[RMDB]
RNA sequence: GGGAACGACUCGAGUAGAGUCGAAAAGAAGUGGCAGGGACAUGCCCCAAAAGCUCGUUCUAGCAACAUAUGUUUGGCUAGUUCGAGCGAUUAGUCUCGAGGAGCGUCCUCUCGCCUCUUAACGAGAAAUAGUACGAUCGUUCGCGAUCGUACUAUUAAAAGAAACAACAACAACAAC
Reactivity to 2A3 in 0.01 (KOAc 150mM, MgCl2 10mM, bicine 150mM(pH8.5), 24C), signal-to-noise 6, nucleotides 027 to 126: g170a050a010g010u040g020g000c000a000g040g010g000a030c030a060u270g010c010c010c000c010a010a040a000a040g000c000u000c000g020u000u000c010u010a000g010c010a030a090c020a110u300a070u300g130u110u090u080g120g030c000u000a000g000u000u000c010g000a000g000c000g000a000u000u010a030g100u010c050u030c170g030a190g000g010a120g000c010g010u000c010c020u050c010u030c070g000c030c000u010c000u020u020a070a030c110g030a000g080a120
Reactivity to DMS in 0.01 (KOAc 150mM, MgCl2 10mM, bicine 150mM(pH8.5), 24C), signal-to-noise 4, nucleotides 027 to 126: g000a050a050g010u010g020g010c000a120g000g010g000a040c060a100u050g000c000c000c010c040a050a070a130a280g000c000u000c010g020u000u000c000u000a020g000c010a050a000c040a200u030a110u040g000u030u010u030g040g000c000u000a010g000u000u000c020g000a010g000c000g000a000u020u030a110g010u010c080u000c070g010a180g000g000a120g010c050g030u010c010c040u040c060u010c110g010c030c000u000c010u000u000a080a110c080g010a100g040a110
This 177-nucleotide RNA was probed chemically with 2A3 and DMS. The RNA was probed in 150 mM KOAc, 10 mM MgCl2 and 150 mM bicine (pH 8.5) at 24 C. Reactivities are given for positions 27 through 126. Source: RMDB library OK1LIB, as collected in RNAgym.